The data come from the RNA Mapping Database (RMDB), library M2RFPK. Structure probing data (2A3) for a 207-nucleotide construct. As a SHAPE reagent, 2A3 marks flexible, mostly unpaired nucleotides at the ribose 2'-OH.
RNA sequence: GGGAACGACUCGAGUAGAGUCGAAAAACGUCCUCGUCGUAAAGAACGGUAACAUGUUUUCCGAACAUCCGCGCUUGGGUAUACGAGUAUACACCUUACCCAACCCUCGCCAACGGGGAGGAUGGAAUUAAGGAGAGGGCCUUCGGGCCCUCUCCAAGUAAUUAUCGUCGUUCGCGACGAUAAUUACAAAAGAAACAACAACAACAAC
Reactivity to 2A3 in 0.01 (KOAc 150mM, MgCl2 10mM, bicine 150mM(pH8.5), 24C), signal-to-noise 1, nucleotides 027 to 156: a000c030g000u000c000c020u020c040g300u030c020g030u090a040a080a150g010a140a060c030g010g010u130a060a060c050a160u220g070u060u080u050u050c020c090g020a020a010c040a060u050c060c030g060c030g040c160u000u020g000g050g020u020a050u050a090c060g030a050g180u020a060u030a210c060a030c000c060u000u050a010c000c030c000a000a030c000c020c010u030c000g070c010c020a020a100c010g000g000g020g010a000g010g020a010u020g010g040a070a070u100u090a080a110g000g000a020g000a000g010g010g000c000c030u040u040c260g110g010g000c000c040c000u000c000u030c000c000a000a000